[RMDB]
RNA sequence: GGGAACGACUCGAGUAGAGUCGAAAACAUGGACCAGAGCGUUGACGUAUGGGUUCUAACAGCUCCAAACGCCACAUUCGGUAACAAGCACAUGAUUACAAAAUUGCUCAGCAAAGUAGGUUGACCCAUAUUCAGUACGGUUCGCCGUACUGAAUAUAAAAGAAACAACAACAACAAC
Reactivity to 2A3 in 0.01 (KOAc 150mM, MgCl2 10mM, bicine 150mM(pH8.5), 24C), signal-to-noise 7, nucleotides 027 to 126: c030a100u100g050g010a020c010c060a070g010a010g060c040g030u080u130g060a050c010g030u090a080u140g050g010g000u030u040c040u060a110a050c030a080g010c020u020c030c010a040a090a040c020g010c030c000a050c000a090u080u070c030g020g020u060a080a030c050a100a030g060c030a030c000a090u070g040a130u130u160a050c060a030a100a050a100u080u060g010c020u040c080a020g000c070a060a040a070g060u090a070g060g060u020u040g050a090c020c000c000
Reactivity to DMS in 0.01 (KOAc 150mM, MgCl2 10mM, bicine 150mM(pH8.5), 24C), signal-to-noise 4, nucleotides 027 to 126: c070a090u050g000g000a110c030c050a060g000a050g030c030g000u010u020g010a070c110g020u020a070u010g000g000g000u010u020c060u010a090a090c140a110g000c040u000c060c100a030a080a110c110g030c000c050a030c040a060u000u000c040g000g000u010a050a070c200a080a110g000c040a080c050a070u010g010a070u020u010a080c160a030a040a090a120u010u010g000c010u010c040a080g040c050a020a040a030g020u010a070g010g020u000u020g000a120c010c000c010